Chemical mapping of a 177-nucleotide RNA with 2A3 and DMS. The data come from the RNA Mapping Database (RMDB), library RFMREP. The RNA was probed in 150 mM KOAc, 10 mM MgCl2 and 150 mM bicine (pH 8.5) at 24 C.
RNA sequence: GGGAACGACUCGAGUAGAGUCGAAAAUCGAAAUGCAUUUAGGUGCAGCGUCACGUGCUGAUGCGCGGGGGUAGAGCACUGACAAGGCUAGGGGGCACACCCGCUUACCAAACCUUAUCAAACUCCGGUUGUUUUAAUACUUCGGUAUUAAAACAACAAAAGAAACAACAACAACAAC
Reactivity to 2A3 in 0.01 (KOAc 150mM, MgCl2 10mM, bicine 150mM(pH8.5), 24C), signal-to-noise 1, nucleotides 027 to 126: u080c010g010a000a000a080u060g010c040a050u070u140u150a110g000g090u000g000c020a030g040c010g070u020c010a020c090g010u010g020c020u090g050a090u120g040c050g000c010g040g030g010g000g020u030a040g010a020g070c000a010c050u040g050a010c000a000a030g010g020c000u010a010g090g000g000g000g000c010a010c000a030c060c020c000g000c030u020u000a140c000c000a000a030a000c010c000u010u050a050u120c030a020a080a050c020u010c030c040g010
Reactivity to DMS in 0.01 (KOAc 150mM, MgCl2 10mM, bicine 150mM(pH8.5), 24C), signal-to-noise 3, nucleotides 027 to 126: u000c100g000a080a080a100u000g040c010a000u000u010u000a150g010g020u000g000c010a160g010c050g000u000c030a030c110g060u010g030c070u000g020a060u020g010c060g030c040g010g010g010g020g010u010a070g010a040g010c040a020c040u000g000a050c060a040a050g010g010c020u000a260g020g000g020g000g000c020a100c150a110c170c120c060g020c040u000u010a080c030c030a050a140a150c040c010u000u000a080u010c030a040a110a180c070u010c040c060g000

2A3 adducts were read by reverse transcription with SuperScript II with manganese. Reactivities are rounded to 0.1 and cut off at 0 and 3.